RNA sequence: GGGAACGACUCGAGUAGAGUCGAAAAUCAGCCACACGAGAUCGAGCAAUAACAGGUCUGUGAUGCCCUUAGAUGUCCGGGGCUGCACGCGCGCUACACUGAACGGAUCAGCGUGUGUCUACCCUGCGCCGACAGGUGCGGGUAACCCGCUGAACCCCAAUUCGCUCUUCUUCGGAAGAGCGAAUUGAAAAGAAACAACAACAACAAC
Reactivity to 2A3 in 0.01 (KOAc 150mM, MgCl2 10mM, bicine 150mM(pH8.5), 24C), signal-to-noise 2, nucleotides 027 to 156: u090c010a000g050c030c020a040c000a010c060g120a050g000a040u010c050g020a040g150c120a190a140u170a090a100c100a180g010g060u030c050u050g030u020g030a090u110g040c020c000c000u030u080a080g020a180u160g080u100c100c080g020g000g010g000c020u030g000c030a030c020g060c010g000c010g000c060u060a050c030a030c070u100g070a190a020c030g120g000a090u030c020a020g030c010g010u120g020u050g010u120c040u030a010c000c010c020u100g010c030g020c000c000g040a080c060a140g000g020u030g000c000g010g000g000u000a020a040c000c000c020g010c000u000g010a030a040c010c000c000